[RMDB]
RNA sequence: GGGAACGACUCGAGUAGAGUCGAAAACAUCCACUGCUACGGCAGUGGAUGAACGAGGUAGGUACGCCUACCUCGAAAGGCGGAUGUGGUCAUAUACAUUAAACGUCCAUGGUACGCCAUGGACGAACACGUGCGCAUAGUUCGCUAUGCGCACGUGAAAAGAAACAACAACAACAAC
Reactivity to 2A3 in 0.01 (KOAc 150mM, MgCl2 10mM, bicine 150mM(pH8.5), 24C), signal-to-noise 2, nucleotides 027 to 126: c000a010u000c010c000a000c000u000g000c000u020a070c160g160g000c000a010g000u010g000g000a000u000g010a020a020c010g000a000g030g000u010a020g020g010u020a020c190g090c020c000u000a000c010c010u000c000g010a050a020a000g070g000c040g030g030a040u050g000u040g060g040u040c080a060u130a000u020a160c050a040u080u210a110a150a030c040g000u000c010c010a010u010g000g000u020a040c270g030c030c000a000u000g000g000a010c000g000a020a000
Reactivity to DMS in 0.01 (KOAc 150mM, MgCl2 10mM, bicine 150mM(pH8.5), 24C), signal-to-noise 2, nucleotides 027 to 126: c010a030u000c000c000a010c000u000g000c000u020a100c170g050g000c000a000g010u000g000g000a000u000g020a090a100c020g000a000g010g000u000a000g010g020u000a080c300g000c010c000u000a010c000c000u000c010g030a040a030a120g010g000c060g000g000a030u010g000u010g000g000u020c170a110u000a110u020a030c070a060u000u030a040a140a160c020g010u000c000c000a010u000g000g000u000a120c280g020c020c000a000u000g000g020a000c000g020a040a060

An RNA of 177 nucleotides, treated with 2A3 and DMS and read out base by base. For DMS the reverse transcriptase was MarathonRT. The data come from the RNA Mapping Database (RMDB), library OK2TRN. The RNA was probed in 150 mM KOAc, 10 mM MgCl2 and 150 mM bicine (pH 8.5) at 24 C. The 2A3 profile rests on 3,024 reads. Values cover nucleotides 27 to 126.